[RMDB]
RNA sequence: GGGAACGACUCGAGUAGAGUCGAAAAGACGCUGAUGCGAUCGACUGUAAGAUAGAUAGACUGAGAAGACAGAUACGUACGGCAAGUAUCGUCGCCAGAAUUACAGUCGCAAAUUGCCGUACGAAGAAGUCCGAGCCAUAUUCGUAUGGCUCGGACUAAAAGAAACAACAACAACAAC
Reactivity to 2A3 in 0.01 (KOAc 150mM, MgCl2 10mM, bicine 150mM(pH8.5), 24C), signal-to-noise 1, nucleotides 027 to 126: g100a120c120g000c160u110g060a170u260g020c000g030a070u000c000g000a000c000u000g000u000a040a040g010a230u070a140g130a080u110a070g010a130c070u030g030a070g010a180a000g000a000c080a000g010a080u040a110c000g000u000a000c000g000g000c040a020a020g010u010a030u090c000g030u000c000g180c040c000a030g020a110a000u060u000a000c000a000g000u000c000g000c080a000a070a000u060u000g000c000c000g000u000a000c110g060a060a040g200a160